Source information:
The record gives the reactivity of an RNA of 207 nucleotides to 2A3 and DMS. Values cover nucleotides 27 to 156.
[RMDB]
RNA sequence: GGGAACGACUCGAGUAGAGUCGAAAAGGAAACUGUCUAAUGACAUUUUAAGGAUACUACAAUAUGAGCAACUGAAAGAGAAUGACUUACACUGCUUCUUUAUUGCAGCAUGUAUCUUCAAUGUCAUGGUUUCAAGGGGUAGACAUGGCCUACUAAGCCAUUGGGGAACUUUCGAGUUCCCCAAUGGAAAAGAAACAACAACAACAAC
Reactivity to 2A3 in 0.01 (KOAc 150mM, MgCl2 10mM, bicine 150mM(pH8.5), 24C), signal-to-noise 3, nucleotides 027 to 156: g060g010a060a020a010c010u040g010u060c070u160a120a020u000g000a000c000a010u030u050u120u210a040a010g050g000a000u010a000c020u020a030c020a040a040u020a030u100g030a000g020c000a010a050c080u090g080a110a100a010g110a040g100a130a140u180g070a110c030u020u040a050c040a010c040u020g020c000u110u050c020u070u190u030a040u020u060g000c030a040g010c010a120u110g010u000a000u000c000u030u050c060a000a000u010g000u000c000a020u030g000g040u010u080u080c030a030a020g040g000g010g020u020a020g020a080c040a070u030g030g000c000c000u000a070c030u030a110a000g040
Reactivity to DMS in 0.01 (KOAc 150mM, MgCl2 10mM, bicine 150mM(pH8.5), 24C), signal-to-noise 1, nucleotides 027 to 156: g020g010a130a010a010c030u000g010u020c080u000a090a050u010g000a030c010a010u000u010u000u000a030a020g000g000a060u000a040c040u000a300c030a030a050u000a100u000g000a070g000c010a010a110c080u000g000a110a110a090g010a120g010a120a090u000g000a190c060u040u000a120c040a000c030u000g020c020u000u000c120u000u000u020a020u030u000g030c050a030g060c090a060u030g020u010a020u000c030u010u010c080a020a030u000g000u010c010a030u000g010g020u000u000u000c070a110a090g030g020g010g010u000a030g010a010c020a070u000g000g010c020c000u000a050c050u000a050a300g000

The 2A3 profile rests on 1,624 reads. The reactions ran in a buffer of 150 mM KOAc, 10 mM MgCl2 and 150 mM bicine (pH 8.5), at 24 C. 2A3 adducts were read by reverse transcription with SuperScript II with manganese.